[RMDB]
RNA sequence: GGGAACGACUCGAGUAGAGUCGAAAACAGGGUGCAGGAUUCUAUCCUGAAAUACACCCCCUCCACUUUCUCCUAUUCCAGUCCACCGGGGCCUCUCCUCCAGGCAGGAAACAUGAUCUCCUUUUGACACAAAAAUAGUGUUCGCACUAUUUUUGUGAAAAGAAACAACAACAACAAC
Reactivity to 2A3 in 0.01 (KOAc 150mM, MgCl2 10mM, bicine 150mM(pH8.5), 24C), signal-to-noise 7, nucleotides 027 to 126: c050a020g010g000g010u020g020c010a010g000g020a010u270u130c040u180a090u090c010c000u000g020a050a020a000u180a020c000a010c010c000c000c000c000u050c010c010a080c020u040u070u030c040u020c020c000u040a090u110u040c020c020a010g040u010c030c010a040c030c030g000g000g040g020c010c000u020c010u000c010c000u030c010c010a020g040g000c020a010g070g010a050a070a020c050a060u110g030a080u050c020u060c020c010u030u050u060u120g080a040
Reactivity to DMS in 0.01 (KOAc 150mM, MgCl2 10mM, bicine 150mM(pH8.5), 24C), signal-to-noise 3, nucleotides 027 to 126: c170a090g020g000g010u000g000c000a000g000g010a010u000u030c220u000a090u000c000c000u000g000a060a060a140u020a300c040a030c000c010c000c040c040u000c010c030a110c070u000u010u010c020u000c020c030u000a100u020u010c030c020a070g010u000c060c040a100c040c050g000g000g010g000c050c030u000c040u010c020c030u010c010c030a040g010g040c060a080g000g000a080a070a080c090a100u000g000a080u010c030u000c020c030u010u010u010u000g000a300
Chemical mapping of a 177-nucleotide RNA with 2A3 and DMS. Conditions: 150 mM KOAc, 10 mM MgCl2 and 150 mM bicine (pH 8.5), 24 C. It was measured as part of the RMDB libraries RFM100 and RFMREP.